[RMDB]
RNA sequence: GGGAACGACUCGAGUAGAGUCGAAAAUGAGGGACUAAAAUCAAAUAUUCUACAUAUUACAAGGACCAAAUCCAAUAUAAAUCAAUUUUACAAGGAUUAAAACAAAAUACCAAGGACCAAAACCAAACUUAUCUGGUUAAUUCGUUAACCAGAUAAGAAAAGAAACAACAACAACAAC
Reactivity to 2A3 in 0.01 (KOAc 150mM, MgCl2 10mM, bicine 150mM(pH8.5), 24C), signal-to-noise 2, nucleotides 027 to 126: u050g020a060g010g030g000a010c010u030a010a010a000a120u140c050a040a090a020u110a060u120u050c060u170a090c040a140u160a050u050u050a080c010a040a040g000g020a000c000c000a000a060a020u010c020c010a040a010u040a010u040a080a080a040u060c040a060a090u000u060u040u100a020c020a010a010g010g000a010u030u030a030a030a050a000c010a050a040a060a050u070a020c020c020a020a020g020g010a000c000c020a020a060a000a020c000c000a060a050a010